Source information:
This 207-nucleotide RNA was probed chemically with 2A3. The RNA was probed in 150 mM KOAc, 10 mM MgCl2 and 150 mM bicine (pH 8.5) at 24 C. The 2A3 profile rests on 751 reads. Reactivities are given for positions 27 through 156.
RNA sequence: GGGAACGACUCGAGUAGAGUCGAAAACAGGAGCUCGACUCCUUCCUUUCUUCUCUCAUCGGGCAGGUGCCGCUUCCCUCCACCCUCGCCGGUCUUCUGCGCUGGCGCUCUGGCUACUACCCGGUGGAUACAACUGACGCUUGUACUCCGCCCUGCCGAUCAUAAACCUGUUCGCAGGUUUAUGAUCAAAAGAAACAACAACAACAAC
Reactivity to 2A3 in 0.01 (KOAc 150mM, MgCl2 10mM, bicine 150mM(pH8.5), 24C), signal-to-noise 2, nucleotides 027 to 156: c060a010g000g040a020g000c030u140c300g220a290c210u070c000c090u000u120c000c000u030u020u000c030u040u030c020u000c000u000c000a090u030c020g030g000g000c050a150g080g070u120g060c050c000g140c160u060u080c010c000c020u040c060c040a100c060c000c000u020c010g010c000c000g000g040u030c050u290u120c100u300g120c090g000c070u030g010g000c020g020c010u030c050u020g000g000c030u100a050c040u050a060c060c050c030g010g000u010g000g050a050u050a050c030a070a010c000u170g080a060c130g000c040u020u010g000u010a020c120u000c010c000g040c060c010c010u060g070c010c040